[RMDB]
Notes: Structure probing data (DMS and 2A3) for a 207-nucleotide construct. The data come from the RNA Mapping Database (RMDB), library OK3TST. 2A3 adducts were read by reverse transcription with SuperScript II with manganese. The RNA was probed in 150 mM KOAc, 10 mM MgCl2 and 150 mM bicine (pH 8.5) at 24 C.
RNA sequence: GGGAACGACUCGAGUAGAGUCGAAAAUGCAGGGUAUUGGUAUUCCAGACCUGAAAGAUUCAUACACAAUCAAUCUGAAAGUCAGAGCAGAGCAAAUGCACCAUAAGCUGUGAAGUUACUUAGUGGUUCUUUGACUGCUUAACUGAGCUGGUGAAAGUCAUUCCACGUCUUUCGAGACGUGGAAUGAAAAAGAAACAACAACAACAAC
Reactivity to DMS in 0.01 (KOAc 150mM, MgCl2 10mM, bicine 150mM(pH8.5), 24C), signal-to-noise 1, nucleotides 027 to 156: u000g080c020a140g020g030g080u000a180u000u000g030g030u010a150u000u000c010c010a150g020a090c050c050u000g000a040a080a200g000a010u000u000c020a190u010a170c060a270c050a160a080u000c000a080a080u020c030u010g010a000a130a050g000u000c090a110g000a100g060c010a070g030a160g000c070a030a000a030u000g030c080a040c010c000a060u000a030a090g020c010u000g000u010g010a130a070g040u010u010a080c030u000u010a070g030u050g010g030u000u000c060u000u000u010g010a180c000u010g000c000u000u000a030a030c070u000g010a100g010c020u000g000g030u000g000a050a110a160g020
Reactivity to 2A3 in 0.01 (KOAc 150mM, MgCl2 10mM, bicine 150mM(pH8.5), 24C), signal-to-noise 2, nucleotides 027 to 156: u170g010c030a030g070g000g000u080a150u080u080g000g060u000a190u090u120c000c010a020g100a050c000c000u020g070a070a090a020g090a040u090u090c040a010u210a090c080a000c010a090a020u030c030a040a090u030c030u120g010a090a000a050g110u090c050a040g000a050g000c000a000g040a030g130c020a010a040a040u170g030c000a000c000c000a000u000a010a060g000c050u080g120u140g280a070a050g030u050u000a120c000u030u010a030g080u070g030g000u010u070c000u050u000u020g010a000c000u010g030c000u030u000a050a040c000u030g000a000g040c000u000g060g050u030g060a100a020a010g070